[RMDB]
RNA sequence: GGGAACGACUCGAGUAGAGUCGAAAAUACCAGGUCUAAGGACAGCAGCAGGCGCGAAACUUGCCCAAUUGGAGAGAGGCAGUUAUGAGACGUAUAUUUUGUAACCGGGGUAGAAUACCGGUGAUUGGACUUCGUACGUGUUCGCACGUACGAAGUCAAAAGAAACAACAACAACAAC
Reactivity to 2A3 in 0.01 (KOAc 150mM, MgCl2 10mM, bicine 150mM(pH8.5), 24C), signal-to-noise 2, nucleotides 027 to 126: u200a020c000c000a000g030g030u000c010u070a020a020g100g000a050c020a170g000c010a000g000c000a000g120g000c040g000c000g070a020a000a160c000u100u230g020c000c000c000a100a020u080u190g120g000a060g000a020g030a050g070g000c060a000g020u010u070a080u250g100a020g040a000c010g050u160a020u000a120u280u190u090u090g050u030a000a000c010c010g000g050g080g000u020a010g040a300a000u040a020c010c000g000g010u000g020a010u000u080g030
Reactivity to DMS in 0.01 (KOAc 150mM, MgCl2 10mM, bicine 150mM(pH8.5), 24C), signal-to-noise 1, nucleotides 027 to 126: u060a050c000c040a140g000g020u000c040u000a000a080g000g000a020c050a030g000c080a170g000c050a010g000g000c090g000c010g000a020a080a010c100u000u000g000c010c000c030a100a140u000u000g020g000a050g030a160g010a070g000g000c070a040g000u060u000a050u020g000a070g010a130c150g000u000a120u020a120u000u010u020u010g000u050a200a070c030c070g010g000g010g000u020a090g000a050a110u070a020c030c000g030g000u010g000a080u030u020g000